[RMDB]
The record gives the reactivity of an RNA of 207 nucleotides to 2A3.
For 2A3, 1,294 sequencing reads were counted.

RNA sequence: GGGAACGACUCGAGUAGAGUCGAAAAAGUCCUCCGACUGGUUACGACCAGUAGGAGGACAAGGAGGUCAGGGUCAGGAGCCCCCCCCUGAACCCAGGAUAACCCUCAAAGUCGGGGGGCAACCCAAAGGAGCGAUGAAGUUUCGACUUCAUCGCAACAAUACUAGUGGAUUCGUCCACUAGUAUUGAAAAGAAACAACAACAACAAC
Reactivity to 2A3 in 0.01 (KOAc 150mM, MgCl2 10mM, bicine 150mM(pH8.5), 24C), signal-to-noise 2, nucleotides 027 to 156: a000g000u000c000c000u000c000c000g020a000c000u000g000g010u000u080a080c180g050a040c050c000a000g010u000a000g000g000a040g000g010a000c000a000a000g060g010a020g020g020u090c130a040g030g000g000u000c000a010g000g010a020g010c010c000c000c000c000c000c000c000u010g030a120a090c030c000c000a000g010g050a050u050a090a070c010c010c000u040c030a050a060a040g180u190c080g010g000g020g000g000g000c000a010a050c010c020c000a020a030a090g210g030a130g050c000g000a000u020g010a000a000g010u010u060u200c240g080a030c000u000u000c000a020u040c000g000c000a000a000